[RMDB]
RNA sequence: GGGAACGACUCGAGUAGAGUCGAAAAUGUCAUCACGUUUGUGGGUCCAGAGAUUGCUCCAGUGGCUGCGCUGUGCUUAGAGCGGAUAGCCGCAAUGCUGCUGCAAGUGUGCCAGAAUCCAACGCAGGAUGCGAAUCCAUUUCGAUGGAUUCGCAUCAAAAGAAACAACAACAACAAC
Reactivity to DMS in 0.01 (KOAc 150mM, MgCl2 10mM, bicine 150mM(pH8.5), 24C), signal-to-noise 3, nucleotides 027 to 126: u010g020u000c060a060u010c040a070c050g020u000u000u010g040u000g000g020g020u000c030c020a040g010a120g000a130u000u000g020c020u010c130c050a040g000u000g010g030c020u000g000c180g030c020u010g030u030g010c060u010u010a120g010a140g010c140g020g000a160u010a050g000c000c010g010c060a050a160u000g000c030u000g010c040u000g000c070a080a090g030u000g010u000g000c040c020a070g000a120a090u010c040c030a030a090c130g000c170a090g030
Reactivity to 2A3 in 0.01 (KOAc 150mM, MgCl2 10mM, bicine 150mM(pH8.5), 24C), signal-to-noise 2, nucleotides 027 to 126: u070g040u040c020a030u030c020a020c080g060u070u100u170g100u050g000g000g030u020c020c010a000g010a040g040a130u030u110g020c000u030c040c020a040g020u050g100g010c020u040g000c010g020c030u040g050u030g090c020u140u150a090g030a030g080c030g000g060a080u180a010g070c060c020g010c030a000a040u100g010c030u000g000c010u020g000c020a040a080g030u030g020u040g120c020c020a030g020a060a010u040c060c010a020a040c040g020c070a020g100